Chemical mapping of a 177-nucleotide RNA with 2A3 and DMS. The reactions ran in a buffer of 150 mM KOAc, 10 mM MgCl2 and 150 mM bicine (pH 8.5), at 24 C. Values cover nucleotides 27 to 126.
[RMDB]
RNA sequence: GGGAACGACUCGAGUAGAGUCGAAAAGAUAUGGAUGGCUGUGAUAGAUGAACUACUCGACUCAUCGGAAACGAUGAGACGAGCAUCUGGAGCCAUCCUAAGUCAAAAGACAGACUUCGGUCUGUCACUGAUGGAGCAGGUUCGCCUGCUCCAUCAGAAAAGAAACAACAACAACAAC
Reactivity to 2A3 in 0.01 (KOAc 150mM, MgCl2 10mM, bicine 150mM(pH8.5), 24C), signal-to-noise 1, nucleotides 027 to 126: g030a000u090a000u190g010g000a020u000g010g000c000u040g040u100g300a110u120a090g020a010u040g000a060a080c100u170a070c020u300c000g040a060c040u020c000a000u000c000g010g000a100a070a060c020g010a000u010g010a010g040a030c010g000a000g000c000a000u000c010u010g000g060a010g000c000c000a010u000c000c000u000a010a000g000u000c000a020a040a040a170g010a010c000a000g050a030c010u090u210c300g120g000u000c000u000g000u000c030a000
Reactivity to DMS in 0.01 (KOAc 150mM, MgCl2 10mM, bicine 150mM(pH8.5), 24C), signal-to-noise 1, nucleotides 027 to 126: g030a120u010a300u000g000g020a010u000g000g010c000u010g010u020g010a130u000a010g010a000u000g010a070a040c110u020a300c010u000c000g010a100c010u010c000a010u000c000g000g000a080a100a200c000g010a000u000g010a040g010a050c020g000a010g000c020a000u000c000u000g010g000a050g010c000c000a010u020c000c010u000a010a070g000u000c070a070a100a200a110g010a020c010a000g000a000c040u000u020c260g020g010u020c000u000g030u000c000a040

Record summary
It was measured as part of the RMDB library TTRDES. As a SHAPE reagent, 2A3 marks flexible, mostly unpaired nucleotides at the ribose 2'-OH.